[RMDB]
RNA sequence: GGGAACGACUCGAGUAGAGUCGAAAAUACCUUGGGUUUAUUCGACUGGUGAAGAAGAUAGGCUAGAGGUAAGGCCUUCUAUUUUAAAUGUUCCGAAGAGCCCCCAGUGCUUGAAGGGAACACUGGGACGGUUUAGAAGAUUCGUCUUCUAAACCGUAAAAGAAACAACAACAACAAC
Reactivity to 2A3 in 0.01 (KOAc 150mM, MgCl2 10mM, bicine 150mM(pH8.5), 24C), signal-to-noise 2, nucleotides 027 to 126: u050a020c010c000u020u020g060g050g010u070u040u030a110u160u210c010g000a000c020u040g060g020u300g080a020a010g030a020a000g000a000u030a020g000g000c000u050a020g000a010g040g010u010a040a050g090g070c030c000u050u000c030u070a190u110u200u020u170a100a140a120u120g000u040u030c010c010g060a140a060g070a070g230c040c000c000c000c000a010g000u020g070c020u080u120g050a120a050g040g000g000a050a000c000a000c010u000g000g030g000
Reactivity to DMS in 0.01 (KOAc 150mM, MgCl2 10mM, bicine 150mM(pH8.5), 24C), signal-to-noise 3, nucleotides 027 to 126: u010a010c010c000u000u000g010g020g010u000u000u010a020u030u010c000g010a300c000u000g010g050u020g000a190a020g000a080a260g000a030u000a010g000g010c010u000a220g010a040g020g010u010a030a090g020g010c000c010u000u000c020u000a070u010u010u010u020a020a250a170u000g010u000u000c020c000g020a090a140g010a180g010c110c100c020c010c030a010g010u000g010c020u000u000g000a080a050g000g000g010a050a040c000a000c000u010g010g000g020